[RMDB]
The record gives the reactivity of an RNA of 177 nucleotides to DMS.
The reactions ran in a buffer of 150 mM KOAc, 10 mM MgCl2 and 150 mM bicine (pH 8.5), at 24 C.
RNA sequence: GGGAACGACUCGAGUAGAGUCGAAAAGAUAUGGAAAGCGCAAGACGGUCUAGUUGGCACGUUGAAAGCUUUCGGAAACGAAAGCUGGAGUGCCCAACUAGACCGUUGAUGACCGCUUUCCUAAGUCCAUGCUCAACUUCUUCGGAAGUUGAGCAUGAAAAGAAACAACAACAACAAC
Reactivity to DMS in 0.01 (KOAc 150mM, MgCl2 10mM, bicine 150mM(pH8.5), 24C), signal-to-noise 1, nucleotides 027 to 126: g000a060u010a300u000g000g000a000a020a040g000c020g010c070a120a230g000a010c010g010g000u020c000u000a010g010u000u010g020g010c000a000c010g010u000u000g000a150a180a040g000c000u000u000u000c000g000g010a060a100a250c010g000a010a000a000g010c000u000g000g000a080g020u000g030c250c020c030a000a010c000u000a000g000a000c010c000g010u000u010g000a050u030g020a160c300c020g020c000u000u000u000c000c000u020a060a130g010u030c080

DMS adducts were read by reverse transcription with MarathonRT.